RNA sequence: GGGAACGACUCGAGUAGAGUCGAAAAUCGCAGUCACCCCAACUCCGACUUGUGGAUACAAUCUUUGAUUUCAUUCAUAAGUAAGGUGAGAAACAACAAUUAUGUUGGAAACUUUAAUUUUAUUAAAACGUAAUUGUCCAUUCGUGGACAAUUACGUAAAAGAAACAACAACAACAAC
Reactivity to DMS in 0.01 (KOAc 150mM, MgCl2 10mM, bicine 150mM(pH8.5), 24C), signal-to-noise 1, nucleotides 027 to 126: u000c090g000c050a030g000u000c160a060c000c020c000c020a100a160c010u000c000c120g010a060c000u050u010g000u080g000g000a010u070a030c160a010a000u000c030u200u000u070g000a020u000u000u040c140a090u000u000c020a000u000a000a020g000u000a000a000g060g000u040g020a060g100a180a060a050c030a000a020c080a090a100u020u000a100u000g010u000u000g000g000a240a080a100c060u000u000u000a000a040u000u070u080u000a030u000u030a060a040a110
Reactivity to 2A3 in 0.01 (KOAc 150mM, MgCl2 10mM, bicine 150mM(pH8.5), 24C), signal-to-noise 2, nucleotides 027 to 126: u040c010g140c120a020g030u000c050a100c000c000c000c000a000a040c010u000c010c000g010a000c010u000u000g000u000g030g000a020u040a010c160a010a020u020c180u000u060u260g020a010u000u010u070c060a000u010u000c000a000u050a010a000g030u030a080a240g100g000u160g050a040g110a050a070a020c060a000a000c010a120a080u180u200a060u260g000u000u000g020g030a050a030a050c010u000u040u100a170a120u090u230u110u130a280u040u270a010a050a020
The record gives the reactivity of an RNA of 177 nucleotides to DMS and 2A3. The RNA was probed in 150 mM KOAc, 10 mM MgCl2 and 150 mM bicine (pH 8.5) at 24 C. High DMS reactivity at an A or C suggests that its Watson-Crick edge is free. The data come from the RNA Mapping Database (RMDB), library RFM100. Reactivities are rounded to 0.1 and cut off at 0 and 3. For 2A3 the reverse transcriptase was SuperScript II with manganese.